Chemical mapping of a 207-nucleotide RNA with DMS and 2A3. For DMS, 1,866 sequencing reads were counted. The data come from the RNA Mapping Database (RMDB), library M2RFPK. Conditions: 150 mM KOAc, 10 mM MgCl2 and 150 mM bicine (pH 8.5), 24 C. The 2A3 profile rests on 1,954 reads.

[RMDB]
RNA sequence: GGGAACGACUCGAGUAGAGUCGAAAACGAAGGAAAGCUUGACCAGCUAAUCUUCUGCAACGCCAUUACGAGGACUGCCCUUAGAGGCUCAUGCCGAUAGGUCACCCCGCCGGUCGGUCAGCUGCUUAUACCCGUGCACGGUUCGCCGUGCACGGAACUUGAAACAGAUGUUCGCAUCUGUUUCAAGAAAAGAAACAACAACAACAAC
Reactivity to DMS in 0.01 (KOAc 150mM, MgCl2 10mM, bicine 150mM(pH8.5), 24C), signal-to-noise 1, nucleotides 027 to 156: c040g050a150a040g010g000a070a080a130g020c010u000u000g000a110c160c060a220g030c010u000a100a160u000c010u000u000c040u000g040c050a020a060c050g000c020c050a200u000u010a050c100g000a130g020g010a070c060u020g010c000c010c010u000u000a160g000a250g010g010c010u010c090a100u000g020c050c000g000a030u010a050g020g010u000c010a130c080c010c040c050g000c010c000g010g100u000c020g000g020u000c150a170g020c030u000g010c020u000u010a170u000a120c070c010c000g050u000g030c010a010c020g010g000u000u000c300g020c050c000g000u000g030c010a000c000g000g000a000a040
Reactivity to 2A3 in 0.01 (KOAc 150mM, MgCl2 10mM, bicine 150mM(pH8.5), 24C), signal-to-noise 3, nucleotides 027 to 156: c020g020a020a000g050g040a200a120a030g040c020u090u090g030a090c040c000a000g000c000u010a060a030u020c010u020u010c020u080g030c020a060a050c070g020c020c020a080u120u170a050c080g030a060g000g050a040c030u070g010c000c000c030u020u060a030g020a040g050g010c010u010c050a060u180g010c000c010g010a020u050a030g040g010u020c020a140c000c000c000c000g010c020c040g030g010u020c000g000g010u040c020a020g010c040u080g010c050u130u090a100u080a190c050c000c000g000u000g000c010a000c020g000g020u030u010c090g030c030c000g000u000g010c010a000c000g010g000a000a000